[RMDB]
RNA sequence: GGGAACGACUCGAGUAGAGUCGAAAAGUGCUCACUGUUCUCUUGCCAAGACACGGAGUGGACAGUAACUCGCCUUUACACGGGCGUUGGUAUCAGUUCUUGCUUCGAAGCUGCGAAUAGCGUCGCAUACGCUGAAAGAGUUCGCUCUUUCAGCGUAAAAAGAAACAACAACAACAAC
Reactivity to 2A3 in 0.01 (KOAc 150mM, MgCl2 10mM, bicine 150mM(pH8.5), 24C), signal-to-noise 5, nucleotides 027 to 126: g070u050g000c010u010c020a050c010u020g060u070u010c030u030c000u060u100g120c010c060a140a050g160a070c050a030c110g030g000a030g020u030g020g020a010c010a030g020u020a020a020c010u010c050g000c000c000u070u120u120a070c120a050c090g000g000g000c030g020u050u030g040g040u050a060u110c040a040g000u060u010c010u100u120g040c010u020u030c020g050a090a030g030c040u050g020c040g030a060a050u120a090g060c020g070u020c010g000c020a020
Reactivity to DMS in 0.01 (KOAc 150mM, MgCl2 10mM, bicine 150mM(pH8.5), 24C), signal-to-noise 4, nucleotides 027 to 126: g000u010g000c070u000c080a100c050u000g000u000u010c000u010c020u000u030g000c020c090a060a090g010a130c240a210c100g010g010a020g010u000g000g000a030c040a150g010u000a060a060c060u010c040g020c010c000u010u020u020a110c260a100c180g000g000g010c030g000u020u010g000g000u010a060u010c060a060g000u000u010c030u010u030g040c040u000u000c020g010a060a080g050c050u010g000c040g000a030a120u020a060g020c140g010u000c080g000c060a150